[RMDB]
Source: RMDB library OK1LIB, as collected in RNAgym. The record gives the reactivity of an RNA of 177 nucleotides to 2A3 and DMS. For 2A3 the reverse transcriptase was SuperScript II with manganese. The 2A3 profile rests on 55,778 reads. Reactivities are given for positions 27 through 126.
RNA sequence: GGGAACGACUCGAGUAGAGUCGAAAACAUCUUGUGUGGUCCACGUGUUGGAAUGGGACCACGUGGGCGUACCGUGCAAUGAUACGACGGUUGAGACCGCUAGAGGGAUUAGUGGCCGGCGAAGUGACACCUACAGAUCUUUCGAGAUCUGUGGGUGAAAAGAAACAACAACAACAAC
Reactivity to 2A3 in 0.01 (KOAc 150mM, MgCl2 10mM, bicine 150mM(pH8.5), 24C), signal-to-noise 9, nucleotides 027 to 126: c040a050u060c040u080u080g030u010g010u020g070g010u010c000c000a040c030g050u060g050u050u130g110g150a300a250u190g060g040g060a020c000c000a000c000g000u000g000g000g000c060g050u060a040c010c010g010u030g030c020a050a100u170g020a040u050a090c060g030a010c020g040g000u020u050g040a060g030a060c010c010g000c020u030a030g020a090g060g060g000a020u010u030a030g020u030g030g000c010c000g010g000c020g030a080a010g040u040g060a010
Reactivity to DMS in 0.01 (KOAc 150mM, MgCl2 10mM, bicine 150mM(pH8.5), 24C), signal-to-noise 6, nucleotides 027 to 126: c090a060u010c030u000u010g010u010g020u010g000g010u000c000c000a060c070g010u010g000u000u010g010g000a130a100u020g010g000g000a080c100c010a010c010g010u010g000g000g010c060g060u040a050c010c030g010u010g010c060a040a040u040g010a050u010a090c080g010a080c050g000g000u000u010g010a120g000a100c030c020g010c040u010a040g010a130g010g010g010a110u020u010a060g020u000g000g010c010c020g010g000c040g000a090a110g010u010g010a270